[RMDB]
RNA sequence: GGGAACGACUCGAGUAGAGUCGAAAAGUGGCAGAGGCAACCUUGUCCUUCCUAGGCAUUGGCCUCCCACCGAGCAUCGUGUCGUGGGGUGGCGACAUCGCCAAGGCGCAAGCGUCGCUACGCACGCAGUUAAAUUCUAUUUCGAUAGAAUUUAACUAAAAGAAACAACAACAACAAC
Reactivity to DMS in 0.01 (KOAc 150mM, MgCl2 10mM, bicine 150mM(pH8.5), 24C), signal-to-noise 9, nucleotides 027 to 126: g010u000g010g010c230a090g010a200g010g010c030a070a060c050c030u000u000g010u000c020c060u000u010c140c140u000a110g000g010c020a050u000u000g010g010c010c000u000c000c000c000a040c030c050g000a100g010c100a100u000c140g010u000g010u000c020g020u000g000g010g030g050u000g010g000c010g010a040c070a060u000c060g010c010c030a100a110g030g020c170g010c120a060a070g010c130g010u000c020g010c010u000a050c040g010c020a020c020g010c140
Reactivity to 2A3 in 0.01 (KOAc 150mM, MgCl2 10mM, bicine 150mM(pH8.5), 24C), signal-to-noise 9, nucleotides 027 to 126: g040u040g030g020c140a050g020a040g060g000c020a080a120c020c020u030u020g080u110c010c010u080u110c020c050u050a030g010g000c020a040u030u110g110g100c000c000u000c010c000c000a010c010c020g030a040g070c030a130u150c090g080u070g080u140c010g010u020g010g060g010g030u050g010g000c010g010a030c010a040u060c030g000c010c040a070a110g110g000c060g000c050a060a030g050c030g040u020c010g000c010u020a010c030g010c020a010c020g030c020